Chemical mapping of a 177-nucleotide RNA with DMS and 2A3. For DMS the reverse transcriptase was MarathonRT. 2A3 adducts were read by reverse transcription with SuperScript II with manganese. The reactions ran in a buffer of 150 mM KOAc, 10 mM MgCl2 and 150 mM bicine (pH 8.5), at 24 C.
RNA sequence: GGGAACGACUCGAGUAGAGUCGAAAACAUGGCGGCGGGAACGGGUAUAAUCGAAAUCGAAAGAAGCGGACCCCGCGCAGGUGGCUAACCAGAUACGCGGGCGAUGCGGAUUUUCAGUUGCAAAGGCAUGUCGAAGUAGAUUCGUCUACUUCGACAUAAAAGAAACAACAACAACAAC
Reactivity to DMS in 0.01 (KOAc 150mM, MgCl2 10mM, bicine 150mM(pH8.5), 24C), signal-to-noise 5, nucleotides 027 to 126: c100a110u010g000g000c030g010g020c030g010g000g020a100a090c100g010g010g010u020a050u010a080a070u020c110g010a030a090a030u040c050g000a010a040a010g000a300a220g040c000g000g000a300c300c000c000c000g010c000g030c080a070g000g020u000g000g000c210u030a070a050c000c000a090g000a130u020a100c020g000c010g000g000g020c030g000a230u050g020c000g000g000a180u020u000u020u000c040a110g010u000u000g000c070a100a090a050g010g010c080
Reactivity to 2A3 in 0.01 (KOAc 150mM, MgCl2 10mM, bicine 150mM(pH8.5), 24C), signal-to-noise 5, nucleotides 027 to 126: c040a080u100g060g000c030g010g010c040g040g020g020a060a060c050g000g000g040u060a080u050a140a150u130c120g060a120a030a040u080c040g020a030a050a050g040a030a010g010c000g020g000a030c000c010c000c000g000c010g000c020a030g010g020u020g030g080c080u090a060a040c010c000a000g030a130u170a070c020g000c000g000g010g000c010g000a010u030g000c000g000g000a000u040u000u010u000c030a030g020u030u020g030c040a060a070a070g070g040c060